[RMDB]
RNA sequence: GGGAACGACUCGAGUAGAGUCGAAAACAUUGAGAUUGUCAAAUUUGUGCUGUGCUCGGUGUUCAUUGUGUUCGACCCCCACAUGCGGGAGGGGCCGGACGGGGAGCCGGCGAGAGCGCGCAACAGCCGUAACCUAUCAAUUCGUUGAUAGGUUACGAAAAGAAACAACAACAACAAC
Reactivity to 2A3 in 0.01 (KOAc 150mM, MgCl2 10mM, bicine 150mM(pH8.5), 24C), signal-to-noise 7, nucleotides 027 to 126: c050a030u110u210g060a060g080a170u150u200g130u180c070a060a090a140u150u110u120g040u050g000c040u040g050u100g060c050u050c080g030g050u110g170u160u010c060a100u140u220g130u030g020u210u010c030g030a060c000c020c000c060c000a070c020a100u300g090c140g080g050g060a130g010g000g010g030c020c000g000g010a010c000g000g020g010g000a010g020c020c000g000g000c010g010a010g010a000g010c030g000c000g000c030a040a060c020a120g050c040
Reactivity to DMS in 0.01 (KOAc 150mM, MgCl2 10mM, bicine 150mM(pH8.5), 24C), signal-to-noise 6, nucleotides 027 to 126: c050a100u010u010g000a070g010a120u000u000g010u000c070a050a100a160u000u000u010g020u000g020c000u000g030u000g010c030u000c020g020g010u010g010u000u000c030a100u000u010g010u010g010u000u000c010g000a050c020c010c000c010c050a130c090a120u010g010c170g000g010g010a180g020g000g000g030c010c000g010g010a010c020g000g000g010g000a090g010c020c030g000g010c040g010a090g010a060g000c030g020c040g010c060a050a030c150a090g020c150
An RNA of 177 nucleotides, treated with 2A3 and DMS and read out base by base. For DMS, 10,241 sequencing reads were counted. The RNA was probed in 150 mM KOAc, 10 mM MgCl2 and 150 mM bicine (pH 8.5) at 24 C. The data come from the RNA Mapping Database (RMDB), library OK2TRN. For 2A3 the reverse transcriptase was SuperScript II with manganese.